[RMDB]
RNA sequence: GGGAACGACUCGAGUAGAGUCGAAAAGAUAUGGACUGGAAGACGCGCGAAACACCGGUUCGGAAACGAACCCGGUGGAGCGUCCCAGUCCUAAGUCAAAAGGUCAACAACUUCGGUUGUUGACCAAUCUAAUAACGGAGUUCGCUCCGUUAUUAGAAAAAGAAACAACAACAACAAC
Reactivity to 2A3 in 0.01 (KOAc 150mM, MgCl2 10mM, bicine 150mM(pH8.5), 24C), signal-to-noise 4, nucleotides 027 to 126: g010a000u000a000u040g000g000a000c010u010g010g070a300a240g050a160c010g070c010g000c140g300a290a050a000c000a000c000c000g000g010u010u010c000g000g000a000a000a010c000g000a010a000c110c140c030g000g000u000g000g010a010g000c000g000u000c010c000c000a000g000u000c000c000u000a000a000g000u000c010a020a040a050a170g010g000u010c000a010a010c010a000a010c000u100u170c300g180g000u000u000g000u000u010g000a000c000c010a000a000
Reactivity to DMS in 0.01 (KOAc 150mM, MgCl2 10mM, bicine 150mM(pH8.5), 24C), signal-to-noise 4, nucleotides 027 to 126: g010a010u000a010u010g000g010a010c000u000g010g000a170a180g020a010c000g040c000g050c250g010a200a070a060c010a000c000c010g000g000u000u000c010g000g000a010a000a010c010g000a010a020c130c090c100g020g010u010g010g000a010g030c000g010u000c000c000c000a010g000u000c000c000u000a000a050g000u000c010a090a090a130a120g020g010u000c000a000a020c000a010a000c000u000u010c290g020g010u000u000g010u010u000g010a010c010c010a010a000
Structure probing data (2A3 and DMS) for a 177-nucleotide construct. The RNA was probed in 150 mM KOAc, 10 mM MgCl2 and 150 mM bicine (pH 8.5) at 24 C. Reactivities are rounded to 0.1 and cut off at 0 and 3.